[RMDB]
RNA sequence: GGGAACGACUCGAGUAGAGUCGAAAAGGUUCACCCGUGCUCUCGCACUCGAGGGAGCGAAGAGAAACAUCAAGGCCAACUGCAUCGCACCCCUUGCGGGAACCAGAAUGACCCAGACCGUGAUGCCUCCAUAUACAAAGUUCGCUUUGUAUAUGGAAAAAGAAACAACAACAACAAC
Reactivity to 2A3 in 0.01 (KOAc 150mM, MgCl2 10mM, bicine 150mM(pH8.5), 24C), signal-to-noise 8, nucleotides 027 to 126: g030g000u050u050c050a110c030c010c020g010u080g010c010u020c000u010c040g000c020a080c050u090c080g060a140g020g010g020a020g010c020g030a110a010g040a000g040a030a140a030c050a100u170c070a060a040g050g010c030c030a060a040c060u080g000c030a050u040c030g000c020a080c010c010c010c010u000u030g010c050g010g000g010a000a010c010c010a010g100a110a090u100g030a050c000c000c000a010g050a060c030c050g050u050g040a030u060g030c010c020
Reactivity to DMS in 0.01 (KOAc 150mM, MgCl2 10mM, bicine 150mM(pH8.5), 24C), signal-to-noise 9, nucleotides 027 to 126: g010g010u010u000c070a120c030c020c060g030u010g010c020u000c020u000c030g010c070a130c200u010c130g010a110g010g000g010a080g020c010g010a050a050g010a070g000a110a080a130c110a090u010c070a050a060g000g000c040c030a070a100c090u000g000c040a060u000c030g010c060a140c120c120c010c020u010u000g010c060g000g000g000a050a040c050c030a080g000a060a090u000g000a130c030c010c010a100g000a110c090c070g000u000g000a050u010g010c070c140
The data come from the RNA Mapping Database (RMDB), library OK2TRN. This 177-nucleotide RNA was probed chemically with 2A3 and DMS. DMS adducts were read by reverse transcription with MarathonRT. The 2A3 profile rests on 21,605 reads. As a SHAPE reagent, 2A3 marks flexible, mostly unpaired nucleotides at the ribose 2'-OH.